[RMDB]
RNA sequence: GGGAACGACUCGAGUAGAGUCGAAAAGCACUGGCGUUCGCGCCAGUGCAAAGAACGCGACGGCCACCGAAAUUAAACGGUGAAGAACGCGACAAGCCGUAAAAACGUCGAACUUCGGUUCGACGAAUCUUUACAAGAAGUUCGCUUCUUGUAAAGAAAAAGAAACAACAACAACAAC
Reactivity to DMS in 0.01 (KOAc 150mM, MgCl2 10mM, bicine 150mM(pH8.5), 24C), signal-to-noise 3, nucleotides 027 to 126: g000c000a010c020u000g010g010c000g040u000u000c250g020c030g030c010c010a020g000u010g020c010a010a040a090g000a160a120c030g000c020g010a050c050g020g010c070c000a020c000c000g000a060a090a130u000u000a090a090a120c010g000g010u000g010a070a080g010a100a100c040g000c020g000a090c100a080a080g010c030c010g020u010a060a030a070a080a160c000g000u010c000g000a000a010c000u010u010c190g020g000u000u000c000g000a000c000g000a020a030
Reactivity to 2A3 in 0.01 (KOAc 150mM, MgCl2 10mM, bicine 150mM(pH8.5), 24C), signal-to-noise 4, nucleotides 027 to 126: g000c000a000c010u000g010g010c010g040u070u100c260g020c000g010c100c010a000g030u000g010c000a000a010a000g000a070a010c010g010c030g100a030c020g030g000c030c010a010c000c010g060a090a050a030u200u240a140a300a050c030g000g030u070g000a010a010g070a080a040c030g020c010g030a020c070a030a020g010c000c010g020u060a050a030a020a070a040c000g000u000c000g000a010a000c000u040u080c220g090g010u010u000c000g000a000c000g000a000a010